[RMDB]
RNA sequence: GGGAACGACUCGAGUAGAGUCGAAAAAAAAAAGCGACCAAAACCUGGACGAGGAUGGAACACUGGGGGGAGCCGAUACCCAGGACAGGGCAGUCCUGGAGGCAACCGUUAUCCACCUCAGGAAAAACAUGAAUUCAUUGUUCGCAAUGAAUUCAUGAAAAGAAACAACAACAACAAC
Reactivity to DMS in 0.01 (KOAc 150mM, MgCl2 10mM, bicine 150mM(pH8.5), 24C), signal-to-noise 2, nucleotides 027 to 126: a010a010a090a030a060a040g020c110g010a160c060c010a010a120a070a100c050c030u000g000g010a080c140g000a040g000g010a060u010g010g000a040a080c080a080c080u010g020g010g010g000g000g010a200g010c070c000g010a120u000a090c220c000c000a030g010g020a030c020a060g000g000g010c160a060g000u010c010c000u000g000g010a060g010g010c040a060a080c050c020g000u000u000a120u000c000c000a050c020c030u010c010a120g000g010a030a030a090a070a050
Reactivity to 2A3 in 0.01 (KOAc 150mM, MgCl2 10mM, bicine 150mM(pH8.5), 24C), signal-to-noise 2, nucleotides 027 to 126: a000a000a000a000a000a070g040c030g040a080c040c000a020a010a000a190c030c010u020g030g030a040c050g010a030g020g010a130u050g040g020a110a060c060a020c150u080g000g000g030g000g020g000a000g010c010c000g040a050u090a110c010c000c000a000g000g000a000c010a010g120g050g030c050a020g000u010c020c000u000g000g010a030g000g000c020a040a010c010c020g040u060u040a030u100c000c030a060c010c020u020c010a010g010g000a040a080a010a000a000